About this RNA
Structure probing data (2A3 and DMS) for a 177-nucleotide construct. The 2A3 profile rests on 1,408 reads. For 2A3 the reverse transcriptase was SuperScript II with manganese. Source: RMDB library M2PK90, as collected in RNAgym. For DMS, 906 sequencing reads were counted. Reactivities are given for positions 27 through 126. For DMS the reverse transcriptase was MarathonRT.

RNA sequence: GGGAACGACUCGAGUAGAGUCGAAAAUAACGGACUAGGAAACUCGAUCUUUUAAGUGGUAAUCCUAGCGAAUCCAGGGCGAGGAAACUAGGACACUAACCAUGUGAUCCCGGACGCUAGAAGAAAAGUCUAUGCCUGUAUUCGUACAGGCAUAGACAAAAGAAACAACAACAACAAC
Reactivity to 2A3 in 0.01 (KOAc 150mM, MgCl2 10mM, bicine 150mM(pH8.5), 24C), signal-to-noise 2, nucleotides 027 to 126: u070a010a020c030g040g020a050c010u040a040g090g050a000a090a030c030u030c020g020a130u090c060u050u220u040u080a240a100g040u050g050g010u010a060a030u000c000c000u010a000g000c000g030a030a010u000c010c040a170g090g100g020c130g030a010g000g000a010a060a000c020u010a020g020g000a000c020a010c110u070a070a030c010c010a020u140g050u030g060a100u020c000c000c000g010g020a010c010g020c060u050a000g030a120a020g060a020a090a000a000
Reactivity to DMS in 0.01 (KOAc 150mM, MgCl2 10mM, bicine 150mM(pH8.5), 24C), signal-to-noise 2, nucleotides 027 to 126: u010a050a120c060g000g000a140c000u020a060g010g010a070a180a230c000u000c040g000a060u000c030u000u000u000u010a030a120g020u000g000g000u010a140a040u000c030c000u000a000g010c030g000a250a130u000c010c010a090g000g010g010c090g030a080g000g000a100a140a060c000u000a030g000g000a090c080a030c030u000a080a110c150c140a070u000g000u000g010a090u000c000c010c010g000g010a100c080g000c070u010a030g000a150a080g000a010a040a050a100